[RMDB]
RNA sequence: GGGAACGACUCGAGUAGAGUCGAAAAAAAAAGAUAUGGACAUCCCUAACAGCGACGAUCUAACCGUAACAUCGCUCGGAAACGAGCGUGGGUUAGGGAGCUGGGAGGGAUGUCCUAAGUCAAAAAAGAAUAUGGUAUUCUUCGGAAUACCAUAUUCAAAAGAAACAACAACAACAAC
Reactivity to 2A3 in 0.01 (KOAc 150mM, MgCl2 10mM, bicine 150mM(pH8.5), 24C), signal-to-noise 1, nucleotides 027 to 126: a000a000a010a000a020g090a040u160a050u140g030g010a000c000a000u030c000c010c000u020a040a030c030a010g000c030g300a300c010g050a300u000c020u030a010a020c040c000g170u080a070a040c030a200u160c050g010c000u010c020g060g040a090a060a040c000g000a000g000c000g010u020g000g010g010u000u000a020g010g030g000a000g000c010u000g040g030g000a000g000g080g000a010u000g000u000c020c000u000a000a000g000u010c000a000a000a010a000a000a180
Reactivity to DMS in 0.01 (KOAc 150mM, MgCl2 10mM, bicine 150mM(pH8.5), 24C), signal-to-noise 4, nucleotides 027 to 126: a050a050a090a090a050g000a020u010a300u020g000g010a000c020a010u000c000c000c000u000a130a040c000a010g030c010g000a100c220g000a060u010c010u000a000a010c000c000g020u000a060a100c230a050u020c010g020c000u000c010g000g010a110a080a170c000g020a010g010c000g050u000g000g000g020u000u000a000g010g000g010a040g040c010u000g000g000g020a030g000g000g000a010u000g000u000c000c000u000a000a050g020u010c030a010a070a080a110a120a100